[RMDB]
RNA sequence: GGGAACGACUCGAGUAGAGUCGAAAAUACAUCAUCCACAGGUGCCUUACUUCAUCAUAGCUAGGUCAUCACAAAGAAGGAACAUCUAAGCAUUUGCAUCAAGACAUUGGCAUUCUCAUCCAAUACAUUGCAGAUAUUGAAAUGGUAGUAAGUAAGAAGGGGACUAUGAAUUCGUUCAUAGUCCCCUAAAAGAAACAACAACAACAAC
Reactivity to 2A3 in 0.01 (KOAc 150mM, MgCl2 10mM, bicine 150mM(pH8.5), 24C), signal-to-noise 2, nucleotides 027 to 156: u170a000c020a040u030c010a030u030c020c030a040c070a060g010g030u040g020c010c000u020u060a060c010u070u160c010a050u000c000a040u040a070g020c070u000a020g000g030u010c020a040u050c010a090c090a130a130a000g030a000a070g050g000a060a040c020a060u050c080u060a060a070g000c000a060u010u020u130g020c060a080u050c050a030a090g040a070c010a020u000u130g000g080c010a030u150u040c070u030c070a030u050c000c010a060a000u110a080c060a100u020u080g080c010a000g060a040u030a040u110u160g050a070a150a100u000g040g000u020a080g010u050a050a090g050u120a000a030g210a030
Reactivity to DMS in 0.01 (KOAc 150mM, MgCl2 10mM, bicine 150mM(pH8.5), 24C), signal-to-noise 1, nucleotides 027 to 156: u010a050c040a120u000c050a150u000c020c020a000c070a060g050g030u000g000c030c030u000u020a040c050u000u000c050a210u010c070a160u010a070g020c030u000a030g040g010u040c020a090u000c000a060c060a030a070a060g000a130a080g000g000a050a070c090a000u000c050u000a170a100g020c070a190u030u000u000g010c010a100u000c070a050a110g040a120c060a100u030u020g020g000c110a070u010u000c020u000c070a150u010c020c030a070a090u010a070c060a050u000u000g050c040a030g010a080u010a030u000u000g000a030a030a060u020g020g040u000a070g010u000a000a110g000u000a070a090g000a170